Source information: Source: RMDB library OK2TST, as collected in RNAgym. Chemical mapping of a 177-nucleotide RNA with 2A3 and DMS. The 2A3 profile rests on 1,397 reads. For DMS the reverse transcriptase was MarathonRT. 2A3 adducts were read by reverse transcription with SuperScript II with manganese. The reactions ran in a buffer of 150 mM KOAc, 10 mM MgCl2 and 150 mM bicine (pH 8.5), at 24 C. The DMS profile rests on 1,045 reads.

[RMDB]
RNA sequence: GGGAACGACUCGAGUAGAGUCGAAAAGAUGCACAAUGUAAACCUGAUCCGAAUUUUAGUUCAGUUCAAAGUGCUAAUCCUGAAGAUCAUCGCGCUUUUGAUCAAGCAGUCGAACUUGCAAAUAAAAUCUGCAGAACAAAUUCGUUUGUUCUGCAGAAAAAGAAACAACAACAACAAC
Reactivity to 2A3 in 0.01 (KOAc 150mM, MgCl2 10mM, bicine 150mM(pH8.5), 24C), signal-to-noise 2, nucleotides 027 to 126: g030a020u090g030c000a010c030a040a090u100g030u080a130a030a100c030c020u000g030a000u000c050c040g090a110a150u110u180u160u050a060g020u030u000c000a000g020u040u020c010a010a010a010g010u010g000c010u000a000a060u000c000c010u010g020a030a000g050a090u060c020a000u000c030g020c010g010c150u100u040u020u070g040a030u130c020a020a000g000c010a010g030u120c040g030a030a030c020u060u050g000c030a080a020a160u300a040a130a280a030
Reactivity to DMS in 0.01 (KOAc 150mM, MgCl2 10mM, bicine 150mM(pH8.5), 24C), signal-to-noise 2, nucleotides 027 to 126: g010a170u010g000c000a020c020a030a300u000g020u010a030a070a180c290c040u000g010a040u000c050c140g050a030a170u010u020u000u020a110g000u010u010c000a040g010u010u010c040a020a030a300g000u000g000c000u000a170a060u000c000c020u020g010a070a080g000a020u010c060a080u010c040g000c130g020c050u000u000u010u010g000a040u000c170a010a100g000c090a070g010u020c020g040a050a180c040u000u000g020c100a050a060a140u000a110a090a010a100